[RMDB]
This 177-nucleotide RNA was probed chemically with DMS. Conditions: 150 mM KOAc, 10 mM MgCl2 and 150 mM bicine (pH 8.5), 24 C. The data come from the RNA Mapping Database (RMDB), library M2PK90.
RNA sequence: GGGAACGACUCGAGUAGAGUCGAAAAACAUAGGUUGGGCCAUAGCCGCUGCGGUUCAUCAUCUUGCCCUCGCCAGGACCGCUCCCGUUCUACUACUUGGCGUCGCGGAUACCGGGUUGGAAAACAAUGUGUAUGACUGUUUCGACAGUCAUACACAAAAAGAAACAACAACAACAAC
Reactivity to DMS in 0.01 (KOAc 150mM, MgCl2 10mM, bicine 150mM(pH8.5), 24C), signal-to-noise 2, nucleotides 027 to 126: a130c130a080u000a080g020g030u000u000g010g000g000c010c030a090u000a130g030c030c020g040c050u010g000c050g000g020u000u020c090a040u000c130a090u050c030u010u000g020c030c000c010u000c100g020c050c060a080g000g000a060c010c000g000c040u000c040c000c000g010u000u010c060u000a130c070u000a090c110u000u000g000g000c040g040u030c080g020c010g000g020a130u000a090c040c030g000g000g000u010u010g050g000a060a070a090a160c180a030a080